[RMDB]
RNA sequence: GGGAACGACUCGAGUAGAGUCGAAAACAAGUCUCAGACUUGCUUGUUAAAUUACUGCGUGGAAUGCCGAUUCCAGAUUUUGAUUUAGACGAUUUUAUUGACGCACCAUGCUAUUGCUUUAACGCUGAAACAUGUGGGUUCGCCCACAUGAAAAGAAACAACAACAACAAC
Reactivity to DMS in 0.01 (KOAc 150mM, MgCl2 10mM, bicine 150mM(pH8.5), 24C), signal-to-noise 9, nucleotides 027 to 129: c020a020a010g000u020c030u030c180a120g000a040c050u010u000g000c150u040u040g000u000u050a020a080a050u000u000a030c130u020g010c050g000u030g000g010a070a070u000g000c030c040g000a080u020u020c050c070a060g000a070u010u030u040u050g000a090u030u030u040a110g010a140c130g020a040u010u010u020u030a050u060u020g000a270c300g020c070a060c040c030a020u010g010c040u000a060u040u030g020c100u000u000u000a010a060c100g020c050u000g000a110a080a100
Reactivity to 2A3 in 0.01 (KOAc 150mM, MgCl2 10mM, bicine 150mM(pH8.5), 24C), signal-to-noise 9, nucleotides 027 to 129: c010a000a000g020u000c060u030c170a040g030a050c020u020u040g040c030u060u120g050u060u090a030a060a060u130u090a060c040u040g010c010g040u010g010g040a200a140u080g050c030c020g060a070u090u030c040c030a050g020a090u060u100u080u150g140a170u050u080u170a080g040a080c080g010a060u020u030u070u090a200u060u130g010a010c030g000c000a000c010c000a010u010g000c030u080a090u070u130g020c030u030u040u070a070a010c060g010c060u060g050a070a030a010

Structure probing data (DMS and 2A3) for a 170-nucleotide construct. 2A3 adducts were read by reverse transcription with SuperScript II with manganese. The 2A3 profile rests on 36,668 reads. Values are in units of 0.01, from 0 to 300, in steps of 10. The reactions ran in a buffer of 150 mM KOAc, 10 mM MgCl2 and 150 mM bicine (pH 8.5), at 24 C.